[RMDB]
RNA sequence: GGGAACGACUCGAGUAGAGUCGAAAACAAAACAAAGUGUGAUUAACACGAUCUGCACAUGGUCUCUCUCACAUGAUCUACGAAAAGUAGAUCAUGAGUCCGUGCAAUCAAUGUGAGAGAAAAGAAAGGGAUAUCAUUACUUCGGUAAUGAUAUCCCAAAAGAAACAACAACAACAAC
Reactivity to 2A3 in 0.01 (KOAc 150mM, MgCl2 10mM, bicine 150mM(pH8.5), 24C), signal-to-noise 6, nucleotides 027 to 126: c010a010a050a020a010c090a010a170a030g020u020g020u040g060a300u240u290a150a020c020a010c070g030a040u040c030u090g020c020a040c020a090u210g040g020u030c040u000c000u000c010u010c040a010c000a010u000g000a000u000c000u010a000c030g050a220a100a020a110g000u000a000g000a000u000c000a000u000g000a000g010u000c030c020g010u010g000c010a010a060u160c070a060a120u140g010u100g040a020g000a010g040a020a040a020a000g170a030a090a030
Reactivity to DMS in 0.01 (KOAc 150mM, MgCl2 10mM, bicine 150mM(pH8.5), 24C), signal-to-noise 2, nucleotides 027 to 126: c120a090a040a040a110c200a090a230a080g000u010g000u000g000a130u010u130a080a090c000a030c050g000a000u000c110u030g010c000a090c060a100u020g050g000u000c010u000c030u000c000u000c000a160c020a020u040g000a000u000c000u000a000c000g000a060a100a120a200g000u000a000g040a000u030c020a010u040g010a110g000u040c000c010g020u030g060c000a110a070u050c170a080a060u010g000u000g010a030g040a090g000a080a070a090a120g000a050a030a060

An RNA of 177 nucleotides, treated with 2A3 and DMS and read out base by base.
Source: RMDB library OK1LIB, as collected in RNAgym.
The DMS profile rests on 2,341 reads.
The 2A3 profile rests on 5,596 reads.
Reactivities are given for positions 27 through 126.